Annotation: Structure probing data (2A3 and DMS) for a 177-nucleotide construct. For 2A3 the reverse transcriptase was SuperScript II with manganese. Source: RMDB library OK1LIB, as collected in RNAgym. The DMS profile rests on 1,761 reads.
RNA sequence: GGGAACGACUCGAGUAGAGUCGAAAAGCACAGAGGAUAGAAAACCAUCCUCACAGUGGCGGUUUUCAUUCAAUGAAUUCAUUGCGUGACACCAGGAGAAUCCGCGGUGCUUCCUGCUGUCAUCCAAUCAGGGCCAAAAUUUCGAUUUUGGCCCUGAAAAAGAAACAACAACAACAAC
Reactivity to 2A3 in 0.01 (KOAc 150mM, MgCl2 10mM, bicine 150mM(pH8.5), 24C), signal-to-noise 3, nucleotides 027 to 126: g050c010a010c040a070g040a040g050g000a020u100a130g100a110a120a020a000c090c020a040u020c000c000u100c000a160c050a070g060u100g020g020c020g010g000u020u020u020u010c060a030u020u010c000a050a110u040g110a040a160u230u250c020a010u010u120g050c040g000u010g000a010c000a010c070c020a040g100g010a070g020a010a040u030c030c020g060c060g090g010u020g050c000u020u030c000c000u030g050c010u030g020u030c030a060u070c050c000a030a010
Reactivity to DMS in 0.01 (KOAc 150mM, MgCl2 10mM, bicine 150mM(pH8.5), 24C), signal-to-noise 2, nucleotides 027 to 126: g020c020a020c010a090g000a150g000g020a000u000a130g020a050a130a030a050c120c130a030u020c030c000u020c090a140c190a110g000u030g130g070c200g000g000u000u000u010u010c020a040u040u000c050a000a020u020g000a210a140u010u000c020a030u000u030g000c250g000u000g000a020c300a120c160c010a080g000g040a180g020a030a050u000c020c060g020c060g030g020u000g000c100u030u000c000c000u000g010c150u020g000u000c080a080u000c160c030a000a120